[RMDB]
RNA sequence: GGGAACGACUCGAGUAGAGUCGAAAAGUCCUUGCCGUGAGAGGGCAAGAUGAUUGGCCGGACUACACCAACGGAGCUGGCUAUAUCCAAUAAUCUGCUGGAAUAAAUAAAACGAUUCCGUUUCGAGAAAGUCACAUGCAGAGAGAGCUUCGUUUGACAGCGUACAAGGGUUCGCCCUUGUACGCUGAAAAGAAACAACAACAACAAC
Reactivity to 2A3 in 0.01 (KOAc 150mM, MgCl2 10mM, bicine 150mM(pH8.5), 24C), signal-to-noise 2, nucleotides 027 to 156: g010u010c000c000u000u030g000c030c000g100u090g030a130g010a060g040g030g030c020a030a010g090a110u200g040a070u090u200g090g000c010c020g070g010a030c050u140a070c070a060c070c020a040a010c050g000g010a000g010c000u010g070g000c010u060a050u040a030u190c030c000a050a030u120a070a080u020c010u010g000c010u020g030g020a070a060u090a170a150a010u150a040a070a080a000c050g020a030u080u100c030c030g050u000u090u190c160g040a140g070a060a080a030g100u080c060a030c020a210u080g000c000a000g010a000g000a030g000a000g060c000u010u000c020g040u030u010u040g070a070
The data come from the RNA Mapping Database (RMDB), library OK3TST. Structure probing data (2A3) for a 207-nucleotide construct. For 2A3, 1,314 sequencing reads were counted. For 2A3 the reverse transcriptase was SuperScript II with manganese. Values cover nucleotides 27 to 156.